[RMDB]
RNA sequence: GGGAACGACUCGAGUAGAGUCGAAAAUUGGUUACACCAAGGAGGGUAGUGUGAUCAAUUUCUGUUACAUGCAUCAAAUGGAACUUGCUAAUGGUACACAUACCGGUUCAGCAUUUGAUGGUACUAUGACAGUUCUACAGUUCGCUGUAGAACUGUCAAAAGAAACAACAACAACAAC
Reactivity to DMS in 0.01 (KOAc 150mM, MgCl2 10mM, bicine 150mM(pH8.5), 24C), signal-to-noise 2, nucleotides 027 to 126: u000u000g000g020u010u010a000c010a010c010c090a070a210g020g020a130g020g020g050u000a090g000u000g000u000g000a000u000c000a000a000u000u010u000c090u010g010u000u010a100c180a160u030g030c020a010u010c010a000a020a010u000g010g010a010a040c020u000u000g030c120u000a090a100u000g010g010u030a090c300a130c110a060u000a050c170c080g010g000u000u000c030a110g000c010a020u000u010u000g010a010u000g010g010u000a020c110u020a100u000
Reactivity to 2A3 in 0.01 (KOAc 150mM, MgCl2 10mM, bicine 150mM(pH8.5), 24C), signal-to-noise 4, nucleotides 027 to 126: u000u000g020g000u000u000a000c010a010c010c040a070a060g140g030a070g030g100g020u080a030g000u010g000u000g010a000u010c000a010a010u020u020u010c040u020g110u060u120a080c050a100u190g070c000a010u010c010a000a000a000u010g030g000a010a010c010u040u090g040c040u130a070a080u080g020g060u140a080c170a000c010a170u040a030c020c000g000g030u020u010c030a090g040c000a070u010u010u010g000a000u000g010g070u040a040c040u030a060u090
The record gives the reactivity of an RNA of 177 nucleotides to DMS and 2A3. Conditions: 150 mM KOAc, 10 mM MgCl2 and 150 mM bicine (pH 8.5), 24 C. DMS (dimethyl sulfate) methylates the pairing face of unpaired adenines and cytosines.